Annotation
Conditions: 150 mM KOAc, 10 mM MgCl2 and 150 mM bicine (pH 8.5), 24 C. Chemical mapping of a 177-nucleotide RNA with 2A3 and DMS. It was measured as part of the RMDB library OK2TST. The DMS profile rests on 1,094 reads. Values cover nucleotides 27 to 126.

[RMDB]
RNA sequence: GGGAACGACUCGAGUAGAGUCGAAAACGCUACAUCUCCAAUAGAUUGCGAUAAGCCUUGCUAACCAGUUUAUCAAACAGCUUUGGGAAUUUUACUCUAAAUCUGAACUUUUGGUCAACUAACCGAAGACUGUAGGAAAGUUCGCUUUCCUACAGUCAAAAGAAACAACAACAACAAC
Reactivity to 2A3 in 0.01 (KOAc 150mM, MgCl2 10mM, bicine 150mM(pH8.5), 24C), signal-to-noise 2, nucleotides 027 to 126: c020g010c020u020a030c070a110u040c030u020c070c000a030a010u060a170g090a050u040u120g030c000g050a050u030a140a020g000c020c020u070u140g010c030u060a060a070c010c020a040g000u000u030u060a080u060c010a010a010a070c000a020g020c020u030u040u060g030g000g170a050a070u180u210u150u280a120c020u000c050u110a010a040a130u000c010u030g060a110a100c020u050u090u070u010g010g030u010c000a030a000c030u030a070a060c010c000g030a090a010
Reactivity to DMS in 0.01 (KOAc 150mM, MgCl2 10mM, bicine 150mM(pH8.5), 24C), signal-to-noise 2, nucleotides 027 to 126: c050g030c060u000a070c170a100u000c030u010c040c110a120a110u000a070g000a100u010u000g020c070g000a090u010a060a130g040c010c080u010u000g000c070u000a080a070c090c050a110g000u000u000u000a050u000c070a030a090a120c060a010g000c100u000u000u010g020g000g000a050a050u000u000u010u020a080c100u000c030u010a030a070a050u000c010u000g000a170a090c100u000u000u000u000g020g000u000c040a040a090c100u010a120a190c090c080g000a120a140